[RMDB]
Chemical mapping of a 177-nucleotide RNA with DMS and 2A3. High 2A3 reactivity points to a flexible backbone, as in loops and unpaired stretches. The reactions ran in a buffer of 150 mM KOAc, 10 mM MgCl2 and 150 mM bicine (pH 8.5), at 24 C. Values cover nucleotides 27 to 126. For DMS the reverse transcriptase was MarathonRT.
RNA sequence: GGGAACGACUCGAGUAGAGUCGAAAAGAAGUAGGUGACAAAGUCGACCAGGCCUGACUCAGCGAACCGCGUUGCCAGGGUCUGGGUAAAACUCCGACGACAGGAGACGACGAGCACACUCGUGUCCCUGACAGCGGUUCUUCGGAACCGCUGUCAGAAAAGAAACAACAACAACAAC
Reactivity to DMS in 0.01 (KOAc 150mM, MgCl2 10mM, bicine 150mM(pH8.5), 24C), signal-to-noise 2, nucleotides 027 to 126: g000a070a170g010u010a020g000g110u000g000a000c090a050a150a300g010u000c020g000a240c000c000a000g000g000c000c050u000g000a200c290u010c010a110g020c050g000a150a120c240c300g020c110g060u000u000g000c110c000a300g080g000g000u010c000u000g000g000g000u090a010a060a030a060c040u000c000c020g000a120c210g000a090c120a130g000g000a060g000a020c040g040a060c020g000a070g000c060a090c000a000c000u000c020g000u020g000u010c060c000
Reactivity to 2A3 in 0.01 (KOAc 150mM, MgCl2 10mM, bicine 150mM(pH8.5), 24C), signal-to-noise 2, nucleotides 027 to 126: g220a090a000g020u200a010g160g000u000g020a080c060a070a120a010g000u010c040g000a010c010c000a000g000g000c000c110u000g010a010c000u010c020a000g000c020g010a130a120c050c030g210c030g050u030u020g030c000c080a000g060g000g000u000c000u020g010g000g000u060a000a050a000a020c020u060c030c010g170a190c100g010a020c070a030g000g010a030g000a010c000g040a000c010g050a000g030c060a010c000a050c040u010c060g230u200g060u060c070c010